[RMDB]
RNA sequence: GGGAACGACUCGAGUAGAGUCGAAAAGAUAUGGAUGAUACGUGAUUAUGAUCUUGUAUGCGUUGAUCGUGUCACUCGGAAACGAGUGCACGGGAGCAUACAAGAUCAUAAUCAUCAUCCUAAGUCAGUACCUAACCAUGUUCGCAUGGUUAGGUACAAAAGAAACAACAACAACAAC
Reactivity to DMS in 0.01 (KOAc 150mM, MgCl2 10mM, bicine 150mM(pH8.5), 24C), signal-to-noise 2, nucleotides 027 to 126: g000a040u010a300u010g000g010a010u000g000a160u000a140c300g020u010g000a010u000u010a000u000g010a010u000c000u000u000g010u000a020u000g000c000g020u010u010g000a050u020c000g000u000g010u030c010a000c000u010c000g000g020a070a150a250c000g030a000g010u000g010c000a000c000g010g000g020a030g020c000a000u010a000c030a000a000g020a010u000c000a000u000a010a010u000c020a040u000c000a000u000c010c000u010a020a160g000u020c060a120